[RMDB]
The record gives the reactivity of an RNA of 177 nucleotides to 2A3 and DMS.
RNA sequence: GGGAACGACUCGAGUAGAGUCGAAAAGCUAGCCAGCGCACGAUGAGACUGCCGUGACGUCUAGCCUGCGUCUCAACUAUUCUCCAUCAAUCAAAACGCUGGGAUUGAUGUACGAGACUAGUACACAGUGAAUGCACUUCUUCGGAGGUGUAUUCACAAAAGAAACAACAACAACAAC
Reactivity to 2A3 in 0.01 (KOAc 150mM, MgCl2 10mM, bicine 150mM(pH8.5), 24C), signal-to-noise 9, nucleotides 027 to 126: g020c010u020a010g020c010c040a030g010c020g010c030a010c020g050a050u150g030a040g070a110c070u100g060c050c010g030u030g050a130c020g020u050c020u020a010g000c000c010u030g030c030g050u000c010u000c020a020a020c000u010a010u010u000c000u000c000c000a000u000c000a010a000u000c010a010a050a070a120c110g040c110u140g070g050g000a000u000u000g000a000u000g020u040a060c080g000a000g000a010c000u000a000g030u060a050c110a010c030a070
Reactivity to DMS in 0.01 (KOAc 150mM, MgCl2 10mM, bicine 150mM(pH8.5), 24C), signal-to-noise 9, nucleotides 027 to 126: g000c020u000a080g000c100c030a040g010c050g010c040a030c040g000a090u020g010a120g000a080c090u020g010c060c030g000u000g000a090c050g000u030c020u010a060g010c010c020u010g000c050g000u000c010u000c030a120a050c010u000a010u000u000c000u000c000c000a010u000c010a000a010u000c010a060a060a090a120c130g010c100u010g010g010g000a010u000u000g000a020u000g000u040a080c140g010a030g010a010c070u000a010g000u010a100c190a090c190a120
DMS adducts were read by reverse transcription with MarathonRT. Source: RMDB library OK1LIB, as collected in RNAgym. The RNA was probed in 150 mM KOAc, 10 mM MgCl2 and 150 mM bicine (pH 8.5) at 24 C.